[RMDB]
RNA sequence: GGGAACGACUCGAGUAGAGUCGAAAAUCAUGGUGGUUCGCCACCAUGAACUGUCUAGUCGCUAGAAAACGAUCAAAACUACCGACUAGACUAACGAUCGAACUGGGGGACAGUUCGCUGUCCCCAAUCGAAUAGCAAUAUUCGUAUUGCUAUUCGAAAAAGAAACAACAACAACAAC
Reactivity to 2A3 in 0.01 (KOAc 150mM, MgCl2 10mM, bicine 150mM(pH8.5), 24C), signal-to-noise 6, nucleotides 027 to 126: u030c000a000u000g000g000u010g010g040u030u050c200g050c050c000a000c000c000a000u000g000a000a030c010u010g000u000c000u000a000g010u010c000g000c020u010a010g070a090a210a040a060c130g090a160u170c090a020a060a040a180c010u010a010c020c000g010a000c000u000a000g020a000c000u000a020a020c010g070a070u180c050g030a070a100c160u200g090g000g010g010g000a000c000a000g000u030u040c160g000c050u000g000u000c000c000c000c000a000a000
Reactivity to DMS in 0.01 (KOAc 150mM, MgCl2 10mM, bicine 150mM(pH8.5), 24C), signal-to-noise 9, nucleotides 027 to 126: u000c000a000u000g000g030u000g010g010u000u020c240g020c000c000a000c000c000a000u000g000a010a150c110u010g010u000c000u000a010g010u000c000g030c210u000a010g010a090a060a140a140c130g020a100u010c090a070a060a110a120c010u000a010c220c000g010a010c010u000a000g010a010c000u000a020a060c180g000a060u000c060g010a130a120c210u000g010g000g000g000g000a030c000a010g010u000u010c190g010c020u010g000u000c000c000c000c000a010a010